An RNA of 177 nucleotides, treated with 2A3 and DMS and read out base by base. Source: RMDB library OK1LIB, as collected in RNAgym.
RNA sequence: GGGAACGACUCGAGUAGAGUCGAAAAUGUAAACUUGUUUAUUGCUUCGCAUGGCCCAUAUCUUAACUCAGCUUUCACUGAAUCCUCGGUGAAUCAUCAUAUACUUUAUGCCUUUGGUUCCGAGUCACAUACCGAUGCUGUUCGCAGCAUCGGUAUGAAAAGAAACAACAACAACAAC
Reactivity to 2A3 in 0.01 (KOAc 150mM, MgCl2 10mM, bicine 150mM(pH8.5), 24C), signal-to-noise 6, nucleotides 027 to 126: u140g030u090a060a060a050c040u100u050g070u090u200u090a130u120u160g040c020u040u030c030g000c030a070u060g060g000c000c000c020a050u070a060u050c080u070u090a040a050c030u010c040a000g010c040u060u080u090c060a050c030u000g050a090a080u090c010c030u040c010g010g050u050g070a020a010u010c000a010u010c030a010u040a010u040a160c060u100u140u050a020u080g030c000c040u050u030u030g000g000u030u000c020c010g030a020g060u030c010a020
Reactivity to DMS in 0.01 (KOAc 150mM, MgCl2 10mM, bicine 150mM(pH8.5), 24C), signal-to-noise 3, nucleotides 027 to 126: u020g010u020a040a090a120c170u010u020g000u010u010u000a090u010u000g010c070u020u000c010g000c020a020u020g000g020c060c010c010a080u030a060u010c170u000u000a040a090c070u000c050a050g000c060u000u000u010c050a080c010u000g000a090a110u000c190c050u010c030g000g040u010g000a010a010u020c100a060u010c040a060u050a050u030a050c080u030u000u020a030u000g020c190c080u000u010u010g010g010u000u000c010c000g010a130g000u010c110a150
The reactions ran in a buffer of 150 mM KOAc, 10 mM MgCl2 and 150 mM bicine (pH 8.5), at 24 C.